RNA sequence: GGGAACGACUCGAGUAGAGUCGAAAAGGAUCGUUCGCGUUCCGAGGAGCCGGUCGAAGAGGCGAUCCUGUUCGAUCGUUGCGAUCCGUAUCUCGUCGAUCCGAACCGCCCACUGUGGCUCCGCGAGCGAGCCGGACUAGUUCGCUAGUCCGGCUCGAAAAGAAACAACAACAACAAC
Reactivity to DMS in 0.01 (KOAc 150mM, MgCl2 10mM, bicine 150mM(pH8.5), 24C), signal-to-noise 2, nucleotides 027 to 126: g030g020a030u000c000g020u010u020c030g000c040g050u050u020c020c010g030a060g050g050a300g000c120c000g020g010u000c020g000a050a030g000a070g000g000c300g020a030u030c050c020u020g030u060u000c000g000a030u000c000g030u060u010g000c030g010a200u000c020c050g000u030a080u000c010u000c000g000u000c000g000a000u030c030c000g000a070a140c120c000g000c010c000c000a090c100u010g000u030g000g050c020u000c000c000g000c080g000a160g020
Reactivity to 2A3 in 0.01 (KOAc 150mM, MgCl2 10mM, bicine 150mM(pH8.5), 24C), signal-to-noise 4, nucleotides 027 to 126: g040g000a020u020c010g020u220u070c030g000c040g020u060u000c100c020g010a100g000g000a000g000c010c000g020g020u070c020g010a020a030g040a000g130g040c160g050a110u290c020c000u110g140u000u000c000g000a010u010c000g070u150u210g050c020g030a080u060c030c010g010u050a050u020c020u040c010g010u010c010g000a000u000c000c030g000a030a030c050c010g040c040c000c000a060c090u140g090u200g050g000c010u010c030c020g030c030g030a040g030